Structure probing data (DMS and 2A3) for a 177-nucleotide construct.
For 2A3, 1,868 sequencing reads were counted.
The reactions ran in a buffer of 150 mM KOAc, 10 mM MgCl2 and 150 mM bicine (pH 8.5), at 24 C.
2A3 is a SHAPE reagent: it acylates the 2'-hydroxyl of flexible nucleotides of all four kinds.

RNA sequence: GGGAACGACUCGAGUAGAGUCGAAAACAAUCCGGAGAAUGGGGUGAAACUCCUCUGAAAUCCGGUGUUGCUUCAUUCCACACGAAGCACAAACAAACAGAAACACCGGGGAAUUUGUCGAUCCUUGGACAAAUACACAGUUCGCUGUGUAUUUGUCAAAAGAAACAACAACAACAAC
Reactivity to DMS in 0.01 (KOAc 150mM, MgCl2 10mM, bicine 150mM(pH8.5), 24C), signal-to-noise 2, nucleotides 027 to 126: c080a220a020u010c010c000g030g010a000g050a300a020u020g000g010g000g030u000g000a050a040a300c010u010c010c000u000c010u020g000a080a300a130u020c010c010g030g010u000g000u000u000g020c010u000u000c030a150u020u000c170c120a080c150a110c250g000a010a040g010c010a050c100a090a040a090c160a030a090a130c160a050g020a070a090a020c090a070c090c030g000g000g000g000a140a060u000u010u000g010u000c050g000a070u000c000c010u010u010g030
Reactivity to 2A3 in 0.01 (KOAc 150mM, MgCl2 10mM, bicine 150mM(pH8.5), 24C), signal-to-noise 1, nucleotides 027 to 126: c010a020a050u000c010c000g000g010a020g010a040a080u200g000g000g040g010u000g030a000a000a000c060u080c020c000u000c000u010g000a030a030a010u000c000c000g000g030u010g000u000u070g010c000u000u000c010a080u200u000c050c020a080c010a010c120g010a000a000g030c020a020c020a010a070a010c010a020a080a000c040a030g270a060a130a000c090a020c070c040g000g000g010g040a000a050u120u080u110g060u050c010g020a020u000c020c020u010u050g010